[RMDB]
RNA sequence: GGGAACGACUCGAGUAGAGUCGAAAAGAGCUUAAUGCUAGAUAGUUGUCUAUGGACAUGACGAAUUUGAGUUUAACUUGUUACCAAACUUAGCACAUGUUCAAUUCGUUAACUAUCUAGCAUCAUAGAUAGUAUACUGAUUCGUUAGUGUGCUAUCAAAAGAAACAACAACAACAAC
Reactivity to 2A3 in 0.01 (KOAc 150mM, MgCl2 10mM, bicine 150mM(pH8.5), 24C), signal-to-noise 9, nucleotides 027 to 126: g100a020g020c070u130u160a060a000u020g000c000u000a000g000a000u000a000g000u000u050g020u010c020u040a160u040g010g000a000c000a010u020g020a050c040g050a090a070u050u030u070g130a160g040u040u050u070a110a110c110u110u180g090u210u150a050c040c000a020a010a010c030u060u040a020g020c080a010c000a140u010g010u000u000c020a060a120u060u040c030g030u070u070a010a000c000u000a000u000c000u000a000g000c000a000u000c000a000u010a010
Reactivity to DMS in 0.01 (KOAc 150mM, MgCl2 10mM, bicine 150mM(pH8.5), 24C), signal-to-noise 9, nucleotides 027 to 126: g010a130g010c060u010u010a110a010u000g000c010u010a010g010a020u000a000g010u000u000g010u000c020u000a090u010g000g000a000c010a020u000g000a300c050g020a060a070u010u020u010g000a060g000u010u010u020a060a080c210u030u030g010u020u020a090c140c090a010a010a010c060u000u000a100g020c150a070c020a010u000g000u000u000c010a010a070u010u020c130g000u010u010a020a000c000u000a000u000c010u000a000g000c020a000u000c120a050u020a060